[RMDB]
RNA sequence: GGGAACGACUCGAGUAGAGUCGAAAAGGAUGCAACGUAGUAAUAUGUGUGAUCGCUAGCUCAUGAAUUGCACAUUACUAGUCGUAAUUCGAUACAUGAGCUAGAUCGAGUUACGACAUCUGUAUCGCUACAAGAUUCUAUUCGUAGAGUCUUGUAGAAAAGAAACAACAACAACAAC
Reactivity to 2A3 in 0.01 (KOAc 150mM, MgCl2 10mM, bicine 150mM(pH8.5), 24C), signal-to-noise 4, nucleotides 027 to 126: g030g000a000u000g000c000a020a010c030g020u020a010g000u000a000a070u030a100u120g070u000g020u030g090a140u030c020g000c060u010a010g000c010u010c010a030u060g040a030a020u020u020g000c000a000c000a000u000u000a000c010u020a020g020u020c030g000u000a000a000u030u030c000g000a010u030a060c280a210u200g040a000g000c000u000a020g000a000u050c010g000a010g010u000u000a000c010g010a020c000a000u070c100u010g030u000a000u060c010g000
Reactivity to DMS in 0.01 (KOAc 150mM, MgCl2 10mM, bicine 150mM(pH8.5), 24C), signal-to-noise 5, nucleotides 027 to 126: g000g000a010u000g010c010a030a110c300g010u010a000g000u000a020a030u010a130u010g060u010g060u000g000a140u000c300g030c090u000a030g030c020u010c010a040u010g020a110a040u000u000g000c080a010c020a020u000u000a010c020u000a090g020u000c130g020u000a010a020u010u000c020g000a010u000a300c300a060u000g000a000g000c000u000a010g000a030u000c000g000a020g020u000u000a000c010g000a020c000a000u000c130u000g000u000a000u000c010g000
Chemical mapping of a 177-nucleotide RNA with 2A3 and DMS. Values cover nucleotides 27 to 126. The reactions ran in a buffer of 150 mM KOAc, 10 mM MgCl2 and 150 mM bicine (pH 8.5), at 24 C.